[RMDB]
RNA sequence: GGGAACGACUCGAGUAGAGUCGAAAAGAUAUGGACCCGAUAAGUACGACCGACAACAGCUCGGAAACGAGACAUGUCGCGAGUACUUUUGACGGGUCCUAAGUCAAAACCAGAGUUCGCUCUGGAACUUGUAUUUUGACUUCGGUCAAAAUACAAGAAAAGAAACAACAACAACAAC
Reactivity to 2A3 in 0.01 (KOAc 150mM, MgCl2 10mM, bicine 150mM(pH8.5), 24C), signal-to-noise 1, nucleotides 027 to 126: g020a000u070a040u160g010g010a000c000c000c000g010a070u040a040a000g000u000a000c010g010a030c010c000g000a000c010a120a070c040a080g030c010u010c010g020g000a070a040a020c000g000a000g030a040c090a140u100g020u000c000g000c000g030a000g000u000a000c000u010u010u000u050g110a030c000g010g000g000u000c010c000u010a020a020g000u010c020a030a010a100a180c010c010a000g000a010g020u130u160c230g070c070u030c000u010g020g000a030a070
Reactivity to DMS in 0.01 (KOAc 150mM, MgCl2 10mM, bicine 150mM(pH8.5), 24C), signal-to-noise 4, nucleotides 027 to 126: g000a030u020a300u000g010g010a030c000c000c000g010a100u000a030a000g050u000a000c000g010a300c300c010g000a020c020a010a080c300a150g000c010u000c000g000g000a080a050a250c010g000a010g000a020c090a130u020g000u000c010g000c010g000a300g010u010a000c000u000u000u000u000g030a150c040g000g000g010u000c000c000u020a010a030g000u000c010a030a060a090a170c010c010a060g020a010g010u000u000c140g020c030u000c010u000g000g000a030a090